[RMDB]
Record summary:
Chemical mapping of a 207-nucleotide RNA with 2A3.
RNA sequence: GGGAACGACUCGAGUAGAGUCGAAAAGGGGUCCAAUCGCAAGAUGAUUAAAGUCUUUUGACGAUCUGAAGCCUCCACGGAUCGAUAAGACUUCAAUCAUUGAUGACCGAUUGGACGGAGGCACCCAAGCUAACCUGGGGUUCGCCCCAGGUUAGAACCCAUAUUGGCUCUUCGGAGCCAAUAUGGGAAAAGAAACAACAACAACAAC
Reactivity to 2A3 in 0.01 (KOAc 150mM, MgCl2 10mM, bicine 150mM(pH8.5), 24C), signal-to-noise 1, nucleotides 027 to 156: g060g000g020g030u000c000c000a000a010u000c000g000c000a040a200g000a010u010g000a000u030u010a070a000a010g000u010c020u080u300u280u110g070a040c000g000a000u000c000u010g040a060a010g010c000c000u000c000c000a000c010g010g000a000u000c000g030a060u090a300a130g000a000c000u000u010c010a000a000u000c010a010u020u010g100a130u030g000a080c000c010g000a000u010u000g000g000a000c020g000g000a000g000g000c000a020c000c000c000a040a020g000c000u000a000a000c000c000u010g000g000g020g020u000u040c190g150c000c000c000c000a000g020g000u000u000a000g000a000a040
Conditions: 150 mM KOAc, 10 mM MgCl2 and 150 mM bicine (pH 8.5), 24 C. High 2A3 reactivity points to a flexible backbone, as in loops and unpaired stretches.